Structure probing data (DMS) for a 177-nucleotide construct. The DMS profile rests on 2,388 reads. It was measured as part of the RMDB library M2PK90.
RNA sequence: GGGAACGACUCGAGUAGAGUCGAAAACAUUUUAACGCGUGUGCACUCUCUAACACGAAUUACCCAGUUAUUUUCGACUUUACUCGAGUCGUUAUAGCGUGCGUUGAGAGAGUUGGCGGCGAUUGAACAUAUUCUAGACCUUCGGGUCUAGAAUAUGAAAAGAAACAACAACAACAAC
Reactivity to DMS in 0.01 (KOAc 150mM, MgCl2 10mM, bicine 150mM(pH8.5), 24C), signal-to-noise 2, nucleotides 027 to 126: c190a110u000u010u010u020a020a050c230g000c000g020u000g000u000g000c060a060c050u000c020u010c020u000a070a060c030a010c010g000a060a090u010u000a040c060c050c020a110g000u000u000a060u000u000u000u000c000g010a010c000u000u000u000a000c010u000c030g000a000g010u000c000g000u010u000a040u010a060g020c030g020u000g000c010g010u010u000g000a060g000a060g030a050g010u000u000g010g020c030g010g000c030g010a080u000u010g010a060a150